[RMDB]
Chemical mapping of a 207-nucleotide RNA with 2A3. The 2A3 profile rests on 436 reads. For 2A3 the reverse transcriptase was SuperScript II with manganese. Source: RMDB library OK3TST, as collected in RNAgym. The RNA was probed in 150 mM KOAc, 10 mM MgCl2 and 150 mM bicine (pH 8.5) at 24 C.

RNA sequence: GGGAACGACUCGAGUAGAGUCGAAAAUUUCAAGCCAGGUCUGUCUUGAUAAGAAAGCUCACAUGCUUUCUUUCUUAUGACACUGUUUAAGCUGUGUUCUGCUAAGUUCCUAAGAUUCUCUAGGAUAGAUGCAUGUGUAGGAUCAAUUCAGGGCGAAUCGCCUCAAAUCUUUCGAGAUUUGAGGCGAAAAAGAAACAACAACAACAAC
Reactivity to 2A3 in 0.01 (KOAc 150mM, MgCl2 10mM, bicine 150mM(pH8.5), 24C), signal-to-noise 1, nucleotides 027 to 156: u050u030u040c000a050a000g050c020c010a090g060g080u000c010u020g010u000c010u070u050g020a050u150a100a090g090a100a100a030g020c000u030c020a060c040a050u040g000c000u000u160u000c000u060u030u020c000u020u100a120u130g020a000c010a020c060u020g160u070u220u160a160a110g010c050u010g000u010g020u120u120c030u000g070c000u050a030a110g070u080u010c000c000u020a040a020g030a160u130u090c160u060c050u200a000g090g000a000u020a090g020a010u040g060c000a010u010g040u020g000u070a000g000g070a030u050c000a010a010u050u020c000a000g020g010g020c000g090a040a150